Structure probing data (2A3 and DMS) for a 177-nucleotide construct.
[RMDB]
RNA sequence: GGGAACGACUCGAGUAGAGUCGAAAACUAGCGUACAGUACUGAUCCUGGAUCUCUAGUCACCAUGCAUGUGUACUAGGCACAUGCACACACGUACUAGCGUACACGGUACGUCUCGCGGAUCGAUCCAGCGCAGGUGAUUUCGAUCACCUGCGCUGAAAAGAAACAACAACAACAAC
Reactivity to 2A3 in 0.01 (KOAc 150mM, MgCl2 10mM, bicine 150mM(pH8.5), 24C), signal-to-noise 1, nucleotides 027 to 126: c000u030a030g030c000g030u020a010c020a140g000u020a030c020u080g050a080u030c080c050u140g130g020a130u000c010u000c020u070a020g020u020c010a000c100c000a010u040g050c020a010u020g000u020g000u090a180c100u200a160g300g000c000a000c000a040u020g000c000a010c060a010c010a000c030g010u110a020c000u000a010g040c100g100u010a040c080a020c080g050g000u010a020c010g000u030c120u080c110g130c060g050g000a100u080c040g030a010u040c010
Reactivity to DMS in 0.01 (KOAc 150mM, MgCl2 10mM, bicine 150mM(pH8.5), 24C), signal-to-noise 2, nucleotides 027 to 126: c030u000a020g040c050g040u000a070c170a070g040u000a100c060u000g050a030u000c070c100u000g000g000a040u010c020u000c010u000a030g000u010c040a120c130c150a100u000g000c000a010u000g010u000g000u000a150c190u000a090g000g000c000a000c010a000u000g010c020a010c140a050c110a090c300g010u000a050c000u000a060g000c240g020u000a070c060a090c050g000g010u000a000c000g000u000c090u030c100g000c110g010g000a110u000c080g000a130u000c040
Notes:
2A3 adducts were read by reverse transcription with SuperScript II with manganese. The data come from the RNA Mapping Database (RMDB), library OK2TRN.